[RMDB]
RNA sequence: GGGAACGACUCGAGUAGAGUCGAAAACCCCCACCGGGCGCUCCCCUCGGCAGACCGCCCAUUGGGUUCACACCCCCAGGCCGCGGGCCGGCUGUUCUUCUUUCUCUUUCGUCGUCAUCCUUGGCUAGUAUCAAGCAGUUCGCUGCUUGAAAAAGAAACAACAACAACAAC
Reactivity to 2A3 in 0.01 (KOAc 150mM, MgCl2 10mM, bicine 150mM(pH8.5), 24C), signal-to-noise 7, nucleotides 027 to 129: c000c000c010c000c010a050c030c050g020g010g000c030g030c020u040c000c010c000c010u040c020g000g000c010a010g040a160c030c050g020c000c000c000a060u060u160g050g000g000u170u110c090a080c010a040c050c000c000c000c000a030g040g000c020c010g050c050g030g020g020c000c010g010g000c030u030g040u040u020c000u050u010c000u010u090u010c000u000c000u010u060u030c040g040u010c000g020u010c030a060u020c030c010u050u070g030g010c000u040a050g040u050a090
Reactivity to DMS in 0.01 (KOAc 150mM, MgCl2 10mM, bicine 150mM(pH8.5), 24C), signal-to-noise 8, nucleotides 027 to 129: c050c010c020c030c030a000c120c070g000g000g000c080g000c120u020c030c020c030c040u000c080g000g000c000a000g010a160c110c080g000c010c020c030a050u070u050g030g010g020u060u000c120a130c130a270c070c030c020c040c040a090g040g040c070c060g000c110g000g000g010c060c060g000g000c060u020g020u000u010c020u020u040c020u030u040u000c000u020c020u000u000u000c050g020u030c080g000u020c020a060u000c000c000u000u000g000g000c050u040a070g030u040a100